An RNA of 177 nucleotides, treated with DMS and read out base by base.
[RMDB]
RNA sequence: GGGAACGACUCGAGUAGAGUCGAAAAUGUUUAACUCGUUGGUUUGUGUUAAUUUAGGUGGUUUGGCGAGGUAGGGCGUUUAUGGUAUGGCUAUGGGUGUGGUGUGUGUUAAAGAUCUAGAUUAACAGAAUAUUUAAUUUUUCGAAAUUAAAUAUUCAAAAGAAACAACAACAACAAC
Reactivity to DMS in 0.01 (KOAc 150mM, MgCl2 10mM, bicine 150mM(pH8.5), 24C), signal-to-noise 2, nucleotides 027 to 126: u020g010u010u020u020a120a140c160u010c090g000u000u000g000g030u010u010u000g030u000g010u000u000a030a070u010u000u010a060g000g020u010g000g020u020u000u020g010g010c050g000a060g010g020u010a050g000g000g010c090g010u000u010u000a030u010g020g020u010a040u010g000g010c030u000a060u010g010g020g020u010g030u030g000g020u010g000u000g010u000g010u000u000a050a050a120g000a010u020c020u010a030g000a100u000u010a020a060c030a080
For DMS, 5,107 sequencing reads were counted. DMS adducts were read by reverse transcription with MarathonRT. It was measured as part of the RMDB library OK1LIB.